[RMDB]
RNA sequence: GGGAACGACUCGAGUAGAGUCGAAAAUGCCAGGGGUUCGCCCCUGGCACAUUACCGAGAAAGCACCUCGGUAUAAAACUGCAACCCUUGGAAACAAGGGAAACUUUGACACAUUCGUGUGUCAAAAAUCAAAACUCAUGUUCGCAUGAGUUUUGAUAAAAGAAACAACAACAACAAC
Reactivity to 2A3 in 0.01 (KOAc 150mM, MgCl2 10mM, bicine 150mM(pH8.5), 24C), signal-to-noise 1, nucleotides 027 to 126: u030g020c000c000a000g010g020g000g000u030u050c130g100c000c000c020c030u010g000g000c000a000c000a010u000u030a000c000c020g020a000g010a010a250a020g150c040a040c060c000u000c010g020g050u010a000u020a000a010a000a010c040u110g050c050a100a270c030c000c000u010u000g020g020a040a040a010c000a000a000g000g020g000a020a020a010c020u020u000u010g000a020c000a000c010a000u020u130c240g080u020g010u030g040u040c000a000a000a020a000
Reactivity to DMS in 0.01 (KOAc 150mM, MgCl2 10mM, bicine 150mM(pH8.5), 24C), signal-to-noise 2, nucleotides 027 to 126: u010g010c000c000a020g060g010g000g030u000u010c300g010c020c000c020c050u010g000g010c000a010c080a000u000u000a010c010c000g000a020g000a080a170a100g050c250a120c130c010u010c000g010g020u000a010u000a070a050a090a130c060u010g020c100a100a160c010c010c010u010u000g010g000a220a100a140c020a000a010g000g010g000a020a020a060c080u000u000u010g000a010c000a000c000a030u000u010c140g000u000g010u000g010u010c000a010a010a060a140